This 177-nucleotide RNA was probed chemically with 2A3 and DMS. DMS adducts were read by reverse transcription with MarathonRT.
RNA sequence: GGGAACGACUCGAGUAGAGUCGAAAACUUAGGUGACUACAAAGAUAACUGGAUUAUAGAAAUCGUGGAACAAGUAGGGGAAGAAGAUCCAACACUACUACACCCGCUAUCCACAUCUUUCCGUAUAAUCAUCCCAUCAGUUCGCUGAUGGGAUGAUAAAAGAAACAACAACAACAAC
Reactivity to 2A3 in 0.01 (KOAc 150mM, MgCl2 10mM, bicine 150mM(pH8.5), 24C), signal-to-noise 3, nucleotides 027 to 126: c010u160u230a120g060g020u100g060a080c050u090a010c200a060a110a040g050a220u160a110a040c120u130g020g000a050u100u060a110u180a170g090a020a160a060u100c040g000u050g030g000a080a050c060a300a100g000u060a130g010g050g020g030a050a050g060a020a000g040a110u090c010c000a140a080c150a030c090u160a020c010u040a000c040a100c060c000c010g000c010u010a030u000c000c000a040c020a060u040c020u000u130u000c020c090g010u090a020u070a140
Reactivity to DMS in 0.01 (KOAc 150mM, MgCl2 10mM, bicine 150mM(pH8.5), 24C), signal-to-noise 2, nucleotides 027 to 126: c080u000u000a050g090g000u020g000a130c080u040a070c130a090a150a010g000a050u030a180a100c100u050g000g000a080u000u000a200u040a180g020a100a090a020u040c050g030u000g000g000a000a200c130a000a070g010u000a030g000g000g000g000a070a010g000a150a000g000a130u050c110c150a080a050c160a160c050u010a010c000u000a060c050a190c050c000c060g000c000u000a030u010c040c000a050c000a040u020c090u000u000u030c130c090g000u000a080u000a040

For DMS, 1,217 sequencing reads were counted.